[RMDB]
RNA sequence: GGGAACGACUCGAGUAGAGUCGAAAAUGACAGUGUACAGGCGCGAAAGCGUCUGUCAAUUAGCAAUGACUGUAUGCUAAUUGCCUAUUGUGAAAACAAUAGGAUGCUGUCUAACAGUCAUUGAUACGAUCUAGUGGAAUUUCGAUUUUACUAGAUCAAAAGAAACAACAACAACAAC
Reactivity to DMS in 0.01 (KOAc 150mM, MgCl2 10mM, bicine 150mM(pH8.5), 24C), signal-to-noise 7, nucleotides 027 to 126: u020g000a010c000a000g020u010g000u010a010c000a000g010g000c000g010c010g010a120a090a160g010c000g010u000c000u000g000u000c000a000a000u000u000a000g000c000a050a130u010g000a010c000u000g010u000a210u000g000c000u000a000a000u000u000g000c000c000u000a000u000u000g010u000g000a100a060a110a010c000a000a000u010a010g000g000a010u000g010c000u000g000u000c000u010a090a030c000a000g010u000c000a160u040u030g010a110u030a110c210
Reactivity to 2A3 in 0.01 (KOAc 150mM, MgCl2 10mM, bicine 150mM(pH8.5), 24C), signal-to-noise 9, nucleotides 027 to 126: u060g000a000c000a000g000u010g000u020a000c000a000g000g000c000g000c000g040a060a040a050g010c000g010u010c000u000g000u000c000a000a000u000u000a000g000c010a010a040u080g000a000c000u000g000u010a010u040g000c000u000a000a000u000u000g000c000c000u000a000u000u010g000u010g050a030a020a000a000c000a000a000u000a000g000g000a000u010g000c000u000g000u000c000u000a000a000c000a000g010u000c000a010u040u260g060a050u060a090c130
Chemical mapping of a 177-nucleotide RNA with DMS and 2A3. For DMS, 36,026 sequencing reads were counted. The 2A3 profile rests on 63,996 reads. The RNA was probed in 150 mM KOAc, 10 mM MgCl2 and 150 mM bicine (pH 8.5) at 24 C.